[RMDB]
RNA sequence: GGGAACGACUCGAGUAGAGUCGAAAAACCAAUACUUCGGUAUUGGUGGAAAACCUUUGUGUGGGAGUAUGCUCAUCGAUCGCAAGCACCCAUUGGGUGUGAUGACCGGGAGAGUGAAACCACACUCUGGUGGGACUUACCGGGUUCGCCCGGUAAAGAGAGUUCCGGUAUUCGUACCGGAACUCUCAAAAGAAACAACAACAACAAC
Reactivity to 2A3 in 0.01 (KOAc 150mM, MgCl2 10mM, bicine 150mM(pH8.5), 24C), signal-to-noise 1, nucleotides 027 to 156: a000c030c030a020a020u010a000c010u050u030c200g080g000u000a010u000u000g000g020u090g010g010a110a040a000a000c000c000u020u000u000g020u000g000u010g010g030g040a000g060u050a030u300g020c020u020c020a190u090c090g020a010u030c010g050c160a060a030g000c000a020c020c000c080a230u190u300g010g000g000u020g010u030g020a150u230g000a010c010c010g000g000g060a300g000a000g040u010g010a010a010a010c000c000a010c000a000c020u000c010u000g000g020u010g000g010g050a030c040u050u000a000c000c000g000g010g000u040u020c080g070c000c030c180g150g010u160a020a060a100